RNA sequence: GGGAACGACUCGAGUAGAGUCGAAAAGACCUUCAGUUCGCUGAAGGUCGAUGAUGGUAAGAGAGAUUACCAUCUGUUAAGUGAUAUGGAUAAGAUCUCUCUGUGAACGUGCUUUCGAGCACGUUAACAGUUUGAACAUCUUCGGAUGUUCAAACUGAAAAGAAACAACAACAACAAC
Reactivity to 2A3 in 0.01 (KOAc 150mM, MgCl2 10mM, bicine 150mM(pH8.5), 24C), signal-to-noise 4, nucleotides 027 to 126: g000a000c000c000u000u000c010a030g000u030u110c180g030c110u010g000a000a010g000g010u000c010g010a000u010g010a000u010g000g070u080a060a010g000a010g000a000g000a010u020u010a000c020c000a010u000c020u030g090u080u150a210a150g080u080g190a100u080a070u300g110g010a060u040a100a070g010a050u000c000u000c000u000c020u020g030u020g080a020a000c000g000u000g000c000u050u050u140c180g100a010g000c010a000c000g000u000u000a010a010
Reactivity to DMS in 0.01 (KOAc 150mM, MgCl2 10mM, bicine 150mM(pH8.5), 24C), signal-to-noise 5, nucleotides 027 to 126: g000a010c000c000u000u010c000a000g010u000u010c220g030c000u000g000a010a000g010g010u000c000g010a030u010g000a050u010g010g010u000a050a030g000a010g000a010g000a030u000u000a060c030c030a010u000c010u000g000u000u000a070a130g010u010g010a130u010a100u000g000g010a080u010a040a100g000a020u000c000u000c000u000c000u000g010u010g020a010a010c000g000u000g000c000u000u000u010c190g010a010g020c000a000c010g000u000u000a020a050